[RMDB]
RNA sequence: GGGAACGACUCGAGUAGAGUCGAAAACGUGUAAGUUCUUCUCGGUUCUUACUGGUGGAUACGGCUGUCAAAGUAUGAGGGUGUGACGGGGGUAUUUAUAAAUAGGAGCUCCUUGCGAGGUGUCACGCCAUGCUGCUUCUUUCGAGAAGCAGCAUGGAAAAGAAACAACAACAACAAC
Reactivity to 2A3 in 0.01 (KOAc 150mM, MgCl2 10mM, bicine 150mM(pH8.5), 24C), signal-to-noise 2, nucleotides 027 to 126: c020g000u060g030u130a050a050g060u080u070c030u070u030c060u010c000g070g030u070u000c020u010u000a110c050u050g140g030u100g030g000a030u040a060c070g020g040c000u000g020u060c070a090a070a180g090u050a200u140g040a050g000g020g000u030g030u050g030a000c000g010g010g040g000g000u010a010u020u150u030a110u010a010a090a000u130a030g030g030a030g000c000u020c030c010u040u060g050c000g010a030g050g000u020g040u040c030a020c020g000
Reactivity to DMS in 0.01 (KOAc 150mM, MgCl2 10mM, bicine 150mM(pH8.5), 24C), signal-to-noise 2, nucleotides 027 to 126: c100g020u010g020u020a030a050g000u010u000c050u010u000c090u030c110g000g000u000u020c030u000u000a030c050u000g000g050u010g020g000a150u050a030c160g010g000c000u000g010u030c040a060a130a110g010u010a030u020g030a100g010g020g000u020g030u000g000a010c020g020g020g000g000g040u030a020u000u000u020a090u030a110a030a060u040a100g010g000a060g000c030u010c020c050u000u020g000c090g000a030g000g020u000g000u000c020a050c110g000
The record gives the reactivity of an RNA of 177 nucleotides to 2A3 and DMS. 2A3 adducts were read by reverse transcription with SuperScript II with manganese. Conditions: 150 mM KOAc, 10 mM MgCl2 and 150 mM bicine (pH 8.5), 24 C. For 2A3, 1,242 sequencing reads were counted.